[RMDB]
RNA sequence: GGGAACGACUCGAGUAGAGUCGAAAAGGCCGCUCAUCGAGUUCUGUGCACCUAUCGGUCAUCGCGACGCCGAUGCCGGUGAGUUGGAAUCCUGGCAACCGCAGAAGCUGAGCACGGCGGCGCUGGAAUAGAACGACAGAUUCGUCUGUCGUUCUAUAAAAGAAACAACAACAACAAC
Reactivity to DMS in 0.01 (KOAc 150mM, MgCl2 10mM, bicine 150mM(pH8.5), 24C), signal-to-noise 4, nucleotides 027 to 126: g000g020c010c000g010c010u010c080a130u020c020g000a140g010u010u000c030u010g020u000g000c150a110c120c030u010a030u010c030g030g000u050c040a020u000c050g010c060g010a120c170g020c110c000g020a060u010g000c000c000g000g000u010g010a090g010u010u020g010g020a130a060u020c020c000u010g000g010c040a070a090c090c020g010c030a060g000a070a120g000c040u010g000a080g020c070a090c150g000g000c000g000g010c040g020c030u000g000g000a300
Reactivity to 2A3 in 0.01 (KOAc 150mM, MgCl2 10mM, bicine 150mM(pH8.5), 24C), signal-to-noise 7, nucleotides 027 to 126: g050g010c020c000g010c020u030c030a090u050c040g080a020g070u100u050c050u070g050u060g030c080a070c060c030u020a050u050c020g010g080u170c040a020u040c030g010c030g210a210c080g070c110c000g070a040u010g010c000c000g000g000u040g030a060g010u080u160g040g020a100a100u070c020c020u020g070g010c030a050a050c040c010g000c020a030g040a100a030g030c070u100g030a030g050c040a030c070g010g000c000g000g010c030g000c010u020g020g000a020